RNA sequence: GGGAACGACUCGAGUAGAGUCGAAAAUCAUUGUUCGCAAUGACCAUCACCUUUGUGUUUAGGGCCUGUGCAAGGUCGCCGACUCCCAUUGGGAGUCGGUCGACUGAUGACCACAGGCAACCUAAACACUCUGGUAACGCUCGUAGUUCGCUACGAAAUACUCAUAAUCGUUCGCGAUUAUGAGUAUAAAAGAAACAACAACAACAAC
Reactivity to DMS in 0.01 (KOAc 150mM, MgCl2 10mM, bicine 150mM(pH8.5), 24C), signal-to-noise 2, nucleotides 027 to 156: u000c030a110u010u000g000u000u010c120g070c010a130a100u000g000a080c080c050a090u000c030a040c000c020u000u020u000g030u000g040u020u000u000a020g010g000g050c020c010u020g030u000g010c010a070a290g000g000u000c000g000c000c000g000a040c000u000c010c000c020a300u000u010g030g060g020a050g020u010c010g010g040u000c010g030a010c000u000g010a090u010g000a160c300c000a010c000a010g010g010c020a010a010c000c000u000a010a030a010c000a010c010u010c020u000g000g040u000a030a060c070g000c090u010c000g010u000a030g010u000u010c220g040c000u010a030c010g010a070a190
Reactivity to 2A3 in 0.01 (KOAc 150mM, MgCl2 10mM, bicine 150mM(pH8.5), 24C), signal-to-noise 1, nucleotides 027 to 156: u050c010a010u010u020g040u080u090c240g040c120a010a000u010g010a060c010c010a120u160c110a030c010c010u030u000u010g010u000g010u010u010u010a060g010g090g170c000c000u000g010u010g010c060a140a250g030g000u000c000g000c000c000g000a000c010u000c000c060c090a300u190u300g000g000g020a000g000u000c000g000g000u020c000g000a000c000u000g020a060u100g020a030c020c020a000c000a000g000g000c000a010a030c010c000u000a000a000a000c000a000c010u000c000u000g000g010u020a090a070c090g050c100u010c000g010u010a010g020u140u070c260g000c040u020a000c030g010a050a080
Background: This 207-nucleotide RNA was probed chemically with DMS and 2A3. The data come from the RNA Mapping Database (RMDB), library RNAMAK. Conditions: 150 mM KOAc, 10 mM MgCl2 and 150 mM bicine (pH 8.5), 24 C. 2A3 adducts were read by reverse transcription with SuperScript II with manganese. Values cover nucleotides 27 to 156.